[RMDB]
RNA sequence: GGGAACGACUCGAGUAGAGUCGAAAAACUUCAUUGCUUGAUUGCAUGCUAAUCAGAUUCUUCCUUUCUCUCGCCGGGUAGCCGUUGCUGCUUAAGCGAGUUUCUAGUGCCACUUUGUCACUAGUUUGUAUUAUGAGUUUCACACUCACUUCAAUGAUCUUCUUAACUACUUCGGUAGUUAAGAAGAAAAAGAAACAACAACAACAAC
Reactivity to DMS in 0.01 (KOAc 150mM, MgCl2 10mM, bicine 150mM(pH8.5), 24C), signal-to-noise 3, nucleotides 027 to 156: a070c050u010u000c080a120u000u010g010c040u000u010g020a180u000u000g020c020a060u000g030c070u000a060a110u000c060a100g000a130u000u000c060u010u000c020c030u000u010u000c060u000c020u000c000g030c060c020g040g030g020u010a060g020c010c200g020u000u010g020c000u010g000c020u000u000a080a070g020c030g000a040g040u000u000u000c000u000a030g010u000g020c090c050a170c160u010u010u020g020u010c030a030c000u000a020g000u000u000u000g020u010a100u000u010a070u000g040a050g030u000u010u010c120a120c100a070c010u000c010a040c010u000u000c050a070a070u000g010a210
Reactivity to 2A3 in 0.01 (KOAc 150mM, MgCl2 10mM, bicine 150mM(pH8.5), 24C), signal-to-noise 5, nucleotides 027 to 156: a000c090u160u080c090a140u140u060g020c020u080u110g060a130u130u150g080c060a030u060g010c030u180a100a050u130c030a040g020a190u150u060c020u050u070c020c000u020u200u080c080u010c000u000c020g010c010c000g050g010g000u000a000g000c020c050g230u120u280g010c010u000g000c010u070u030a070a000g000c000g000a000g010u000u060u020c000u000a000g000u000g020c020c020a140c130u180u190u150g010u060c020a000c010u010a010g020u010u100u150g080u030a130u140u070a110u160g020a010g010u040u220u240c110a090c010a010c040u000c000a030c040u090u150c090a070a160u130g020a100
An RNA of 207 nucleotides, treated with DMS and 2A3 and read out base by base. 2A3 is a SHAPE reagent: it acylates the 2'-hydroxyl of flexible nucleotides of all four kinds. The 2A3 profile rests on 1,954 reads. For DMS the reverse transcriptase was MarathonRT. It was measured as part of the RMDB library ARCHII. Reactivities are given for positions 27 through 156.